This 177-nucleotide RNA was probed chemically with 2A3 and DMS. DMS adducts were read by reverse transcription with MarathonRT. For 2A3, 1,975 sequencing reads were counted. The RNA was probed in 150 mM KOAc, 10 mM MgCl2 and 150 mM bicine (pH 8.5) at 24 C. It was measured as part of the RMDB library OK2TRN.

[RMDB]
RNA sequence: GGGAACGACUCGAGUAGAGUCGAAAAGCUGCUGAUCAUGAUCCUGCUGCCGGUCCUGGUGGGCCUUGACGUGUCGACGCGACGGGCGGCGGUGGUGCUGGCCUGUACGCUAGUCGGAUUCGCAGUCCUUCACUACCCGGUUCGCCGGGUAGUGAAGAAAAGAAACAACAACAACAAC
Reactivity to 2A3 in 0.01 (KOAc 150mM, MgCl2 10mM, bicine 150mM(pH8.5), 24C), signal-to-noise 2, nucleotides 027 to 126: g010c010u020g000c020u020g040a050u040c010a050u070g080a070u130c020c060u060g000c000u020g020c000c000g050g030u040c000c040u090g060g050u130g020g030g070c000c000u070u140g130a050c030g130u140g050u170c000g040a050c000g000c030g010a030c060g000g030g000c020g020g000c040g010g020u190g020g120u230g000c040u050g180g100c000c000u100g090u130a120c070g000c020u030a030g000u040c020g010g050a070u080u040c040g020c030a030g010u070c000
Reactivity to DMS in 0.01 (KOAc 150mM, MgCl2 10mM, bicine 150mM(pH8.5), 24C), signal-to-noise 2, nucleotides 027 to 126: g010c020u000g000c020u000g000a070u000c050a040u000g020a090u000c050c000u010g000c020u010g010c060c030g010g020u010c040c040u000g010g040u010g010g030g020c020c060u010u010g010a060c080g020u000g020u010c020g010a000c060g000c160g000a040c000g000g030g000c010g030g010c000g000g030u010g010g030u020g000c030u030g020g000c010c020u000g020u010a100c080g020c030u010a060g030u000c040g010g010a060u000u000c200g030c060a060g000u000c070